[RMDB]
RNA sequence: GGGAACGACUCGAGUAGAGUCGAAAAGAUAUGGAGAGUUCCACUUGUCAGUGAGCUCGGAAACGAGCUACUUGGAUUUAGUGGAGACUCUCCUAAGUCAAAAGCGUGUAGCUUCGGCUACACGCAACGUUAUGACUACCUUCGGGUAGUCAUAACGAAAAGAAACAACAACAACAAC
Reactivity to 2A3 in 0.01 (KOAc 150mM, MgCl2 10mM, bicine 150mM(pH8.5), 24C), signal-to-noise 2, nucleotides 027 to 126: g000a020u030a040u170g010g010a000g020a010g030u020u050c000c010a010c060u110u110g090u070c000a020g100u070g290a020g010c000u010c000g010g000a030a050a010c010g000a000g030c000u050a020c020u080u170g110g000a090u300u300u300a020g000u010g030g010a070g040a020c000u000c010u000c010c000u000a030a010g010u000c000a000a080a060a130g000c000g000u000g000u000a000g010c020u050u070c300g160g000c000u000a000c010a000c000g000c010a000a000
Reactivity to DMS in 0.01 (KOAc 150mM, MgCl2 10mM, bicine 150mM(pH8.5), 24C), signal-to-noise 1, nucleotides 027 to 126: g000a040u000a300u010g000g000a010g010a040g020u000u010c000c000a040c010u000u000g000u000c000a010g010u010g000a060g000c010u000c000g010g000a050a090a160c010g010a010g000c000u000a020c010u030u000g020g010a020u000u020u010a020g030u000g000g000a020g010a030c000u000c000u000c010c020u000a000a090g000u000c050a080a100a090a120g000c000g000u000g010u000a020g020c000u010u010c200g030g010c000u000a000c000a010c000g010c010a000a020